[RMDB]
RNA sequence: GGGAACGACUCGAGUAGAGUCGAAAAUCGUACGAGUGUGAGAGUGUGAACUCGUACGAGAACACUCGUACACUCGUGUGAGAACGAGUGUGUACACGAACGAGAGAGAGAGAGUGAACACGUACUCUCACGAGUUCACUCGUACACGUGUACUCUCGCAAACUGAUUACUUCGGUAAUCAGUUUGCAAAAGAAACAACAACAACAAC
Reactivity to 2A3 in 0.01 (KOAc 150mM, MgCl2 10mM, bicine 150mM(pH8.5), 24C), signal-to-noise 2, nucleotides 027 to 156: u010c010g010u010a000c000g000a000g000u030g010u020g050a050g000a000g030u030g020u060g210a090a060c020u020c030g060u100a100c090g010a000g000a010a000c010a010c000u000c010g030u010a000c000a000c000u020c010g030u010g000u040g030a060g010a030a010c080g000a020g030u100g010u070g010u050a010c050a010c040g050a130a030c050g010a030g000a020g000a000g000a000g000a000g000a090g020u040g030a080a000c080a010c080g040u070a060c030u010c010u040c060a010c000g050a050g020u040u050c020a020c010u000c000g000u030a010c030a000c050g000u010g000u010a000c010u010c020u020c050
Reactivity to DMS in 0.01 (KOAc 150mM, MgCl2 10mM, bicine 150mM(pH8.5), 24C), signal-to-noise 1, nucleotides 027 to 156: u010c010g010u000a000c000g010a030g040u000g000u010g030a070g000a030g090u020g100u000g120a200a200c000u000c020g000u000a110c140g030a030g000a110a050c010a030c000u000c020g050u000a160c010a010c000u010c000g080u010g090u020g010a100g000a050a140c000g000a050g080u000g000u000g000u000a040c060a070c050g000a050a260c090g000a130g010a110g020a110g000a270g010a050g000a010g090u000g000a050a070c090a180c010g070u020a150c030u000c080u010c060a090c030g010a160g040u000u000c030a070c020u000c030g000u010a020c120a050c020g010u000g000u000a050c000u000c040u000c060